The record gives the reactivity of an RNA of 177 nucleotides to DMS and 2A3. The RNA was probed in 150 mM KOAc, 10 mM MgCl2 and 150 mM bicine (pH 8.5) at 24 C. Reactivities are given for positions 27 through 126.
RNA sequence: GGGAACGACUCGAGUAGAGUCGAAAAGCCGUGCUCGAGAGGGAGCAGAAAAUGCAGAGCUAUCCCGUCGUUUCGCUAAACAAAUGCGAAACGACUAAUUGCGUUACAUACGCAAUCCUCUAAUGAAUAGGGACAGUAUAUUCGUAUACUGUCCCUAAAAAGAAACAACAACAACAAC
Reactivity to DMS in 0.01 (KOAc 150mM, MgCl2 10mM, bicine 150mM(pH8.5), 24C), signal-to-noise 5, nucleotides 027 to 126: g020c030c080g010u010g010c020u020c010g020a050g010a040g000g000g000a020g020c010a090g000a060a090a110a130u000g000c110a110g000a140g010c030u000a170u000c010c000c010g030u000c000g000u010u000u000c000g010c000u000a030a080a150c300a070a090a080u000g000c000g020a010a000a010c000g010a000c000u000a030a020u000u000g000c010g000u000u000a090c250a130u000a030c000g000c000a010a020u000c010c000u000c010u010a100a110u000g000a090a110
Reactivity to 2A3 in 0.01 (KOAc 150mM, MgCl2 10mM, bicine 150mM(pH8.5), 24C), signal-to-noise 3, nucleotides 027 to 126: g030c000c010g120u030g000c000u000c010g070a030g010a010g000g040g000a010g010c010a010g150a020a160a030a020u260g030c060a010g020a040g100c010u030a040u050c000c000c000g000u000c000g010u000u000u000c000g000c010u040a130a210a170c080a060a120a030u150g000c000g010a000a000a000c000g000a000c010u010a010a010u000u010g000c000g020u010u070a170c090a130u240a030c050g000c000a000a010u000c000c000u040c010u020a100a130u140g110a080a090